[RMDB]
An RNA of 177 nucleotides, treated with DMS and read out base by base. The RNA was probed in 150 mM KOAc, 10 mM MgCl2 and 150 mM bicine (pH 8.5) at 24 C.
RNA sequence: GGGAACGACUCGAGUAGAGUCGAAAAGAUAUGGAGCCUCCUACCCACCUGAUGACUAAACUCCCCACCCUCCAUGUUCGGAAACGAACAGGAGGAGGUUUAGUCAUCAGAGGGAGGCUCCUAAGUCCAUCUAGCGAAACUUCGGUUUCGCUAGAUGAAAAGAAACAACAACAACAAC
Reactivity to DMS in 0.01 (KOAc 150mM, MgCl2 10mM, bicine 150mM(pH8.5), 24C), signal-to-noise 1, nucleotides 027 to 126: g070a170u040a210u040g050g000a040g000c030c010u000c000c000u040a140c010c010c020a300c130c000u000g000a030u000g000a000c000u000a000a040a000c010u000c010c010c000c030a300c040c000c010u000c000c000a190u000g010u000u000c000g000g000a190a030a240c000g000a000a010c030a060g000g040a010g000g000a030g000g000u000u000u000a010g010u000c000a010u000c000a000g000a070g010g020g010a000g000g000c010u010c000c000u000a000a010g000u010c100